[RMDB]
RNA sequence: GGGAACGACUCGAGUAGAGUCGAAAAUAUUUCAAAUGAUGAUAUUUCCAUGCACCACUCUGAAGCUUUUAUUAGCAUCGUGCAGAUUAUGGAUUUCUGAAAAUUAAAAGACACGGUUCGCCGUGUCGAUACCAAUAGGGUUCGCCCUAUUGGUAUCAAAAGAAACAACAACAACAAC
Reactivity to 2A3 in 0.01 (KOAc 150mM, MgCl2 10mM, bicine 150mM(pH8.5), 24C), signal-to-noise 8, nucleotides 027 to 126: u030a010u020u100u050c060a090a150a120u160g060a030u030g010a010u030a070u110u060u000c010c010a020u050g000c020a030c040c010a060c060u140c070u170g060a070a020g030c000u110u090u040u100a270u300u110a050g000c000a020u060c030g020u010g000c020a010g020a080u100u090a020u160g020g000a030u000u060u040c030u050g070a050a060a040a040u150u170a080a210a100a030g000a000c000a000c000g010g040u030u040c110g020c060c000g000u000g000u000c000
Reactivity to DMS in 0.01 (KOAc 150mM, MgCl2 10mM, bicine 150mM(pH8.5), 24C), signal-to-noise 8, nucleotides 027 to 126: u000a040u000u000u000c040a100a110a140u010g000a120u000g000a050u000a020u000u000u000c010c010a050u000g010c060a070c100c110a100c120u010c110u010g010a040a080g020c010u010u000u000u010a140u010u000a030g020c000a060u000c040g010u000g000c050a070g000a140u000u010a040u000g000g000a100u000u000u000c020u000g000a070a040a070a110u010u010a040a060a080a150g000a010c000a000c000g000g000u000u010c250g020c000c000g010u000g000u000c000